[RMDB]
RNA sequence: GGGAACGACUCGAGUAGAGUCGAAAAAUGGAAAACACAGCAAAUAUAACCAUUGUUAGUCCUUCAUUGAAGGAAUCUGACUUUGAGUCUGAAGAAAAAGCUACCAAUGACAACAAUGGACUCAUAAAUUAGCAUAAAUCUUCGGAUUUAUGCUAAUAAAAGAAACAACAACAACAAC
Reactivity to DMS in 0.01 (KOAc 150mM, MgCl2 10mM, bicine 150mM(pH8.5), 24C), signal-to-noise 5, nucleotides 027 to 126: a080u010g010g000a040a030a070a080c090a050c090a070g010c080a080a100a100u000a090u020a110a190c060c010a010u000u010g000u010u000a080g030u010c020c030u000u000c020a190u010u010g020a020a010g010g010a040a060u010c050u000g000a070c030u000u010u000g000a070g010u000c020u000g010a060a090g000a060a070a070a100a090g000c070u000a090c070c040a050a060u000g020a070c100a040a040c060a050a070u000g010g000a090c110u000c050a040u010a050a080
Reactivity to 2A3 in 0.01 (KOAc 150mM, MgCl2 10mM, bicine 150mM(pH8.5), 24C), signal-to-noise 3, nucleotides 027 to 126: a000u070g020g050a030a050a050a010c060a030c020a020g070c050a070a190a000u150a030u050a180a040c030c000a020u030u000g010u010u040a020g010u000c020c000u000u020c060a300u070u300g020a010a010g030g000a040a090u050c040u020g030a020c000u070u050u100g020a040g030u000c040u050g070a060a030g070a060a150a010a000a010g040c030u030a020c000c040a030a080u070g050a030c030a020a000c010a030a090u090g010g030a020c010u000c040a010u090a080a150
The record gives the reactivity of an RNA of 177 nucleotides to DMS and 2A3. Reactivities are given for positions 27 through 126.